[RMDB]
RNA sequence: GGGAACGACUCGAGUAGAGUCGAAAAGAGCAACUUAGGAUUUUAGGCUCCCCGGUGCGUCUCGAGCCGCGCCGGGCCAAACCCACAGGGGCUGGCGGUCCUGUGCGGUCAAAAUCUUUCCGCUGGAAUACCUAUCCCAGUUUCGACUGGGAUAGAAGAAUACCUUUAGCUUCGGCUAAAGGUAUUCAAAAGAAACAACAACAACAAC
Reactivity to 2A3 in 0.01 (KOAc 150mM, MgCl2 10mM, bicine 150mM(pH8.5), 24C), signal-to-noise 1, nucleotides 027 to 156: g010a000g010c020a020a180c100u070u060a060g150g000a070u090u060u050u080a020g020g030c000u000c000c000c000c010g000g000u010g010c010g040u020c070u140c300g110a070g000c040c000g000c000g000c020c000g010g000g000c000c000a030a020a000c000c000c000a000c000a000g020g010g000g000c000u010g000g000c000g000g000u040c010c000u000g000u000g020c240g010g000u020c020a000a020a010a050u030c020u030u110u050c010c000g000c000u010g000g040a180a130u170a100c000c000u000a000u030c000c000c000a000g010u000u060u130c120g080a000c010u010g000g000g000a000u000a000g000a010a010